Background: Source: RMDB library M2RFPK, as collected in RNAgym. An RNA of 207 nucleotides, treated with 2A3 and DMS and read out base by base. The DMS profile rests on 2,738 reads. The reactions ran in a buffer of 150 mM KOAc, 10 mM MgCl2 and 150 mM bicine (pH 8.5), at 24 C. 2A3 adducts were read by reverse transcription with SuperScript II with manganese.
RNA sequence: GGGAACGACUCGAGUAGAGUCGAAAAGCUUAAUAACCUGCGCUGAGCCCUUCUCCCCCAGCUUGCCUGUGUCCUAGGGAAUUGGAAGGUCAUCCUUCACAGGAUCGUGUGGAAGUCCUGCUGGGGGUCCAAACAUGGUAAUUCGUUACCAUGUUAACAAAAUGUCGGAUUUCGAUCCGACAUUUUGAAAAGAAACAACAACAACAAC
Reactivity to 2A3 in 0.01 (KOAc 150mM, MgCl2 10mM, bicine 150mM(pH8.5), 24C), signal-to-noise 2, nucleotides 027 to 156: g030c050u170u100a090a020u170a240a300c060c110u120g040c040g000c110u060g070a090g030c000c020c000u060u100c100u040c030c000c000c000c000a020g000c000u010u050g020c000c000u060g020u020g020u080c010c030u030a020g030g010g070a080a140u080u100g050g010a030a000g040g050u120c020a090u080c020c000u020u050c050a030c000a070g030g000a070u060c070g030u050g010u040g140g050a060a020g050u010c010c020u020g000c000u010g000g030g000g000g000u010c000c020a010a010a020c000a000u000g000g030u030a030a020u050u140c130g060u030u010a000c020c000a000u000g000u010u010a040a040
Reactivity to DMS in 0.01 (KOAc 150mM, MgCl2 10mM, bicine 150mM(pH8.5), 24C), signal-to-noise 1, nucleotides 027 to 156: g000c030u010u010a140a110u000a080a150c020c060u000g000c080g040c060u000g020a100g000c020c000c020u000u000c060u010c000c000c010c000c030a050g030c010u010u010g000c000c010u000g040u000g000u010c030c040u010a170g050g030g030a070a100u010u000g030g010a110a070g020g000u000c090a160u000c000c020u020u000c080a110c030a040g010g010a040u010c050g010u010g020u010g030g000a170a050g000u000c020c050u000g020c060u000g000g010g000g010g030u000c030c010a090a060a010c000a010u000g000g010u000a010a040u000u000c300g020u000u000a030c000c000a000u000g020u000u000a060a180